[RMDB]
RNA sequence: GGGAACGACUCGAGUAGAGUCGAAAAAGCAGCAGGCGGUGAAAUGGUCCCUGCAAACAUGUAUCAUACAUGCAAACGAGUAUUACCAAAUGCGACCAUUUAUCCACAGUAUGGUACUACUGAGUCAUCGUGCCGUAUGAUUCGUCAUACGGCACGAAAAAGAAACAACAACAACAAC
Reactivity to 2A3 in 0.01 (KOAc 150mM, MgCl2 10mM, bicine 150mM(pH8.5), 24C), signal-to-noise 1, nucleotides 027 to 126: a000g090c050a000g030c000a000g000g000c010g040g040u050g060a010a020a120u050g000g040u030c010c000c000u000g000c000a040a090a000c000a030u010g000u020a090u200c170a080u090a100c030a000u000g030c040a020a070a050c100g030a010g010u000a030u050u080a030c050c000a020a020a100u070g010c000g020a000c000c000a030u030u000u100a060u000c040c020a060c010a000g010u060a010u120g060g000u070a040c010u010a010c010u030g040a020g140u090c030a080
Reactivity to DMS in 0.01 (KOAc 150mM, MgCl2 10mM, bicine 150mM(pH8.5), 24C), signal-to-noise 2, nucleotides 027 to 126: a150g000c080a110g050c020a010g000g010c100g040g050u000g000a040a050a020u010g010g010u000c020c020c040u000g020c050a050a110a270c050a010u000g000u000a050u000c120a100u010a010c010a020u010g020c200a050a130a150c120g000a160g000u000a020u000u020a160c150c070a070a060a040u000g020c070g030a010c010c020a010u010u000u000a050u040c010c080a080c060a020g020u000a080u020g000g000u000a020c140u000a030c010u000g010a060g020u010c090a120